[RMDB]
RNA sequence: GGGAACGACUCGAGUAGAGUCGAAAAGAUAUGGACCGUUCACGAAGAGCUAUGAAGCAGUCUCGGAAACGAGACUGUGGAGCUCGGCGUGAGACGGUCCUAAGUCAAAGUCUUCUUCGGAAGACAACACCCGAAGAGUGUUCGCACUCUUCGGGUGAAAAGAAACAACAACAACAAC
Reactivity to DMS in 0.01 (KOAc 150mM, MgCl2 10mM, bicine 150mM(pH8.5), 24C), signal-to-noise 1, nucleotides 027 to 126: g000a070u000a300u010g000g000a020c000c000g010u010u000c000a030c000g000a120a060g030a000g000c020u000a230u000g000a220a270g000c010a040g000u000c000u040c000g010g000a080a100a180c000g020a010g000a030c000u000g000u000g010g000a000g040c000u000c020g010g040c010g020u000g000a060g040a030c000g010g000u000c020c010u000a000a080g000u030c030a060a080a190g040u000c000u000u000c010u000u020c200g000g000a040a030g000a030c020a110a150
Reactivity to 2A3 in 0.01 (KOAc 150mM, MgCl2 10mM, bicine 150mM(pH8.5), 24C), signal-to-noise 1, nucleotides 027 to 126: g070a010u080a060u280g000g000a000c010c010g030u020u030c000a000c000g010a000a030g010a010g060c010u100a160u300g010a020a000g000c010a000g010u010c000u000c020g040g010a000a130a000c010g020a020g000a010c010u000g000u010g000g020a000g000c010u060c040g000g010c000g000u020g030a110g180a010c030g000g000u010c000c000u000a020a000g010u010c030a120a080a030g010u030c010u030u000c020u040u070c300g160g000a010a000g000a000c000a020a010